Structure probing data (DMS and 2A3) for a 177-nucleotide construct.
The DMS profile rests on 2,784 reads.
Conditions: 150 mM KOAc, 10 mM MgCl2 and 150 mM bicine (pH 8.5), 24 C.
The data come from the RNA Mapping Database (RMDB), library M2PK50.
For 2A3 the reverse transcriptase was SuperScript II with manganese.
RNA sequence: GGGAACGACUCGAGUAGAGUCGAAAAGUUAACUCCUUCGGGAGUUAACAAAAGGACAGUGCGAGUCCAAACGCACAAAGAUGACAGAAAUGUCAUCAAUAAAAAGUCCUAGCUUCGGCUAGGACAACUUCCAUAUUUACUUCGGUAAAUAUGGAAGAAAAGAAACAACAACAACAAC
Reactivity to DMS in 0.01 (KOAc 150mM, MgCl2 10mM, bicine 150mM(pH8.5), 24C), signal-to-noise 3, nucleotides 027 to 126: g000u000u000a000a030c010u000c000c000u000u030c150g050g010g020a010g000u000u010a000a010c000a060a070a070a120g020g010a110c150a120g010u000g000c000g020a120g000u000c050c050a050a110a150c010g020c010a010c010a110a110a140g000a010u000g000a010c000a020g010a110a090a120u000g010u000c000a000u000c000a090a080u000a050a070a070a140a120g000u000c000c000u000a020g010c000u000u010c190g020g000c010u000a000g000g000a000c000a010a020
Reactivity to 2A3 in 0.01 (KOAc 150mM, MgCl2 10mM, bicine 150mM(pH8.5), 24C), signal-to-noise 2, nucleotides 027 to 126: g010u020u000a000a010c000u000c000c010u030u080c120g050g000g000a000g010u010u000a000a000c000a000a000a000a000g060g020a030c060a080g000u000g000c010g010a010g070u020c040c000a120a080a010c000g000c020a010c000a020a060a020g010a000u000g000a000c010a000g030a040a050a010u020g000u010c000a010u000c000a000a020u080a000a040a010a020a020g000u000c000c000u010a010g000c000u010u040c300g080g000c000u000a000g000g000a000c000a020a000